[RMDB]
RNA sequence: GGGAACGACUCGAGUAGAGUCGAAAAACUCGGGGAGCACGAGGUUGGAGGGAUGGCACACCACGUGUGCUCCUUGAAGGGCCACGGUGCGGGCUGCCUCGGGGAACAUGUGGUCGAAGCACACGAGCAACAAGAAUCGGUUCGCCGAUUCUUGUUGAAAAGAAACAACAACAACAAC
Reactivity to DMS in 0.01 (KOAc 150mM, MgCl2 10mM, bicine 150mM(pH8.5), 24C), signal-to-noise 2, nucleotides 027 to 126: a100c040u010c020g000g000g000g010a110g020c060a070c090g020a060g010g000u000u000g000g010a090g000g020g010a090u010g020g010c060a090c180a050c010c040a050c050g030u000g000u010g000c090u000c000c010u010u000g000a070a070g020g000g020c000c000a030c040g030g020u010g000c110g000g000g010c040u000g030c010c020u010c030g000g010g000g010a060a030c050a040u000g020u000g000g010u010c050g000a100a110g010c040a050c080a070c080g020a140g000
Reactivity to 2A3 in 0.01 (KOAc 150mM, MgCl2 10mM, bicine 150mM(pH8.5), 24C), signal-to-noise 1, nucleotides 027 to 126: a010c030u010c030g000g000g000g010a050g000c070a000c060g000a060g060g100u040u070g050g040a040g060g060g020a090u090g050g000c000a010c000a020c020c010a060c040g010u070g030u060g020c000u030c030c000u010u050g010a050a020g020g010g010c000c010a010c030g070g120u170g060c190g000g000g030c030u080g050c000c010u020c010g000g000g000g020a030a030c000a020u080g000u030g020g020u030c050g070a070a000g030c040a010c000a000c060g030a030g050